[RMDB]
RNA sequence: GGGAACGACUCGAGUAGAGUCGAAAAUUGACAAAUCAGACCGCUUUAAUGCUCAGAAAGAGAGUCAAUCUUUUGGAAAUAAUGCCUUUGCCGAUGCGUUGAAAGGUUGGAAAAAAUAACCGCUAAACGAGAAAGUAAUGUUCGCAUUACUUUCUCGAAAAGAAACAACAACAACAAC
Reactivity to DMS in 0.01 (KOAc 150mM, MgCl2 10mM, bicine 150mM(pH8.5), 24C), signal-to-noise 4, nucleotides 027 to 126: u010u010g000a060c060a050a120a140u010c030a100g010a170c090c140g020c040u000u000u020a100a080u010g020c020u000c090a120g010a060a200a080g000a040g010a170g000u010c090a040a040u000c080u000u000u000u010g010g010a090a090a070u000a050a040u020g000c040c030u000u010u000g010c050c050g020a070u010g030c100g020u020u000g000a050a060a060g010g020u000u000g020g020a010a020a090a050a040a060u020a060a070c050c040g000c070u020a020a080a130
Reactivity to 2A3 in 0.01 (KOAc 150mM, MgCl2 10mM, bicine 150mM(pH8.5), 24C), signal-to-noise 3, nucleotides 027 to 126: u010u030g010a000c040a000a250a160u030c010a030g050a070c030c010g060c030u190u090u080a220a070u180g000c020u030c020a010g080a130a160a020g060a010g000a020g010u030c020a010a090u030c050u050u130u070u110g070g080a170a130a080u180a090a070u160g010c000c000u040u040u040g040c020c020g100a080u120g020c090g040u030u140g090a120a020a010g000g030u030u030g020g140a100a110a010a000a000a060u060a050a020c050c000g000c120u070a030a000a120

Conditions: 150 mM KOAc, 10 mM MgCl2 and 150 mM bicine (pH 8.5), 24 C. Structure probing data (DMS and 2A3) for a 177-nucleotide construct. DMS (dimethyl sulfate) methylates the pairing face of unpaired adenines and cytosines. For DMS, 3,251 sequencing reads were counted. Reactivities are given for positions 27 through 126. DMS adducts were read by reverse transcription with MarathonRT.